[RMDB]
RNA sequence: GGGAACGACUCGAGUAGAGUCGAAAACAGGACACACACCUGCAGGACCACAGGCAGCACCAGCUCCGGGAAGCCGAUGCAGUGUGCCUGGCUGUGCAGGUACUCCAGGGUGAGGUCGUACAGCUGCGCAGGAGUACUGUUUCGACAGUACUCCUGCAAAAGAAACAACAACAACAAC
Reactivity to 2A3 in 0.01 (KOAc 150mM, MgCl2 10mM, bicine 150mM(pH8.5), 24C), signal-to-noise 2, nucleotides 027 to 126: c020a040g040g090a020c010a010c000a000c010a200c060c010u000g000c020a020g000g010a020c020c000a020c030a020g080g030c010a010g050c000a000c000c020a060g040c020u060c090c010g000g020g030a130a030g120c020c000g020a020u060g000c000a000g000u020g010u000g300c070c020u040g010g040c000u030g000u050g090c090a070g040g000u010a060c010u030c010c020a000g050g000g000u040g040a140g020g080u020c020g000u070a050c050a080g040c090u160g040c040
Reactivity to DMS in 0.01 (KOAc 150mM, MgCl2 10mM, bicine 150mM(pH8.5), 24C), signal-to-noise 3, nucleotides 027 to 126: c050a060g040g000a060c070a050c070a050c020a130c010c000u010g050c190a100g020g000a150c020c010a070c030a060g000g000c050a040g010c000a040c020c070a190g010c020u000c080c040g010g010g010a160a050g000c000c020g040a070u000g010c020a150g000u000g000u000g000c120c050u010g000g000c020u000g010u000g040c080a050g010g010u000a040c020u010c110c000a080g030g010g040u000g000a090g000g010u000c030g030u010a070c180a120g000c110u000g000c240